[RMDB]
RNA sequence: GGGAACGACUCGAGUAGAGUCGAAAAGGAUAUGCUAAACACUGCCGUUUGAAGUCUGUUUAGAAGAAACUUAAUCAAGCUAGCAUCAUGUUGGUUGUUUAUCACUUUUCAUGAUGCGAAACCUUUCGAUAAACUACACACGUAGAAAGAUGUGUAUUCAAGAAUAGCAGUUCGCUGCUAUUCUUGAAAAAGAAACAACAACAACAAC
Reactivity to 2A3 in 0.01 (KOAc 150mM, MgCl2 10mM, bicine 150mM(pH8.5), 24C), signal-to-noise 9, nucleotides 027 to 156: g090g020a110u090a030u200g010c000u000a010a000a000c010a000c010u010g000c000c010g010u010u000u010g010a010a000g000u010c020u020g010u010u020u020a020g010a090a020g060a080a190a020c110u180u150a040a020u060c010a010a000g000c000u000a000g000c000a010u000c000a000u000g010u020u030g030g000u000u010g010u010u020u010a010u020c000a000c000u160u190u050u020c000a000u000g000a000u000g000c000g000a000a000a000c040c040u070u180u120c030g000a000u000a020a000a000c000u030a000c010a000c000a000c020g080u150a050g230a230a100a010g080a300u010g000u000g000u000a040u010
Reactivity to DMS in 0.01 (KOAc 150mM, MgCl2 10mM, bicine 150mM(pH8.5), 24C), signal-to-noise 2, nucleotides 027 to 156: g010g000a140u000a110u000g000c000u000a050a050a090c010a030c040u000g010c020c050g030u010u000u010g010a060a100g000u000c240u000g040u010u000u000a050g000a100a100g000a140a050a110c050u000u000a080a080u000c050a040a040g010c000u000a300g010c040a020u000c020a010u000g020u000u000g020g020u000u010g050u010u000u010a170u020c060a060c030u000u000u000u010c010a010u000g010a040u000g020c030g000a050a050a050c040c020u000u000u000c040g050a100u000a070a000a100c050u000a020c010a020c020a020c000g040u010a140g020a080a090a140g010a020u000g010u000g000u000a050u000